[RMDB]
The record gives the reactivity of an RNA of 207 nucleotides to 2A3.
Reactivities are rounded to 0.1 and cut off at 0 and 3.
The RNA was probed in 150 mM KOAc, 10 mM MgCl2 and 150 mM bicine (pH 8.5) at 24 C.
Values cover nucleotides 27 to 156.
For 2A3, 482 sequencing reads were counted.
RNA sequence: GGGAACGACUCGAGUAGAGUCGAAAAGCAACCCUGUGUUAGAAGAGUGGGGUUUCCUAACUGUAUGGCUUUGGGUAAUUGCUUAAAUCCUCCCAGCCUUAGUUUUUCCAUCUGUGGGUUAGGAGUGGUCCUCUCUACCUCCCAGCAUCAAAUAGGACCAUAAGGCACGGUUCGCCGUGCCUUAUGGAAAAGAAACAACAACAACAAC
Reactivity to 2A3 in 0.01 (KOAc 150mM, MgCl2 10mM, bicine 150mM(pH8.5), 24C), signal-to-noise 2, nucleotides 027 to 156: g010c060a050a040c000c000c000u060g060u000g060u080u160a120g050a240a120g040a070g050u080g000g010g020g000u010u060u010c010c000u020a060a070c050u100g170u250a150u110g000g070c070u060u160u140g000g010g010u100a130a040u140u200g030c060u070u210a040a060a180u160c030c100u000c020c010c030a000g000c010c010u020u050a070g000u050u050u030u140u130c040c020a070u050c070u110g060u070g020g000g000u020u010a010g010g010a010g070u160g030g050u150c020c000u040c000u060c020u000a060c000c000u080c000c010c010a030g070c000a060u270c040a080a070a140u250a070g020g120a010